An RNA of 177 nucleotides, treated with 2A3 and DMS and read out base by base. For DMS the reverse transcriptase was MarathonRT. 2A3 adducts were read by reverse transcription with SuperScript II with manganese. The 2A3 profile rests on 1,834 reads.
[RMDB]
RNA sequence: GGGAACGACUCGAGUAGAGUCGAAAAGCACCGAGGGGCGCCGCCGGAUCAUCGUCGUGGACGCGGUGUUCAGCAUGGAAGGCACCGUCGCCGACCUGGCCACCAUCGCCGAGCUUGCCCACCGGCACAUCGUCAUCGAGUUCGCUCGAUGACGAUGAAAAGAAACAACAACAACAAC
Reactivity to 2A3 in 0.01 (KOAc 150mM, MgCl2 10mM, bicine 150mM(pH8.5), 24C), signal-to-noise 3, nucleotides 027 to 126: g050c040a030c060c050g000a130g040g030g010g000c040g000c020c030g020c000c010g030g000a030u100c030a030u040c080g040u000c010g060u100g050g020a030c020g000c020g000g000u000g000u110u200c030a060g040c040a090u200g130g040a090a070g060g020c030a020c100c000g110u140c080g000c000c000g030a080c030c000u040g070g020c000c010a010c020c020a070u070c000g000c010c010g000a030g000c040u070u100g030c010c010c000a020c030c000g020g000c020a000
Reactivity to DMS in 0.01 (KOAc 150mM, MgCl2 10mM, bicine 150mM(pH8.5), 24C), signal-to-noise 2, nucleotides 027 to 126: g000c120a070c000c020g020a160g000g040g000g000c100g000c000c080g080c000c060g000g000a090u000c050a040u020c020g000u000c040g040u030g020g000a050c130g030c070g010g000u010g000u100u030c020a160g000c070a290u000g000g000a140a130g020g000c000a000c060c120g020u030c110g010c010c120g010a120c020c040u000g020g030c020c040a120c000c050a120u030c080g020c000c000g010a060g010c060u000u000g080c030c000c000a130c170c060g000g000c050a300